[RMDB]
RNA sequence: GGGAACGACUCGAGUAGAGUCGAAAAUGACACGCUUCGGCGUGUCAAAAAAAGCGUACUACCUUUGCCAUGACUCCAACAGCUCGUCCCAAAUAGGACGAGACAUGGAGCAUGGACCCAAAGGUAUCGCAAAAAUCUAACAGUUCGCUGUUAGAAACAAUAGUGCAUGCUUCGGCAUGCACUAUUGAAAAGAAACAACAACAACAAC
Reactivity to 2A3 in 0.01 (KOAc 150mM, MgCl2 10mM, bicine 150mM(pH8.5), 24C), signal-to-noise 1, nucleotides 027 to 156: u160g000a000c010a010c000g000c030u030u060c300g150g000c010g000u020g070u010c010a050a020a050a000a000a000a000g040c020g010u020a050c000u020a000c040c000u000u000u000g030c010c010a080u050g060a300c010u030c010c000a040a040c030a200g040c000u000c000g000u010c020c000c000a060a100a190u220a080g000g010a000c000g000a000g000a000c000a090u010g000g000a000g000c000a000u010g000g000a010c060c000c000a000a000a000g000g010u000a010u090c000g000c010a110a090a000a000a000u000c000u000a000a000c010a080g030u070u060c160g070c130u020g000u040u010a030g000a120a010a000
Reactivity to DMS in 0.01 (KOAc 150mM, MgCl2 10mM, bicine 150mM(pH8.5), 24C), signal-to-noise 1, nucleotides 027 to 156: u020g000a000c000a020c000g030c000u010u000c300g030g060c010g110u010g010u010c000a010a010a030a020a030a080a230g040c060g050u000a150c110u010a050c000c020u000u000u000g020c000c000a000u000g000a290c000u010c000c010a030a090c140a100g000c000u000c000g000u000c000c000c010a050a180a270u010a040g030g000a020c000g000a010g030a000c060a280u000g000g030a010g010c010a000u020g010g000a070c090c300c060a000a000a000g030g020u000a040u000c040g000c020a050a070a090a080a080u010c020u000a010a040c000a030g050u000u000c280g040c010u000g000u000u000a000g000a060a110a080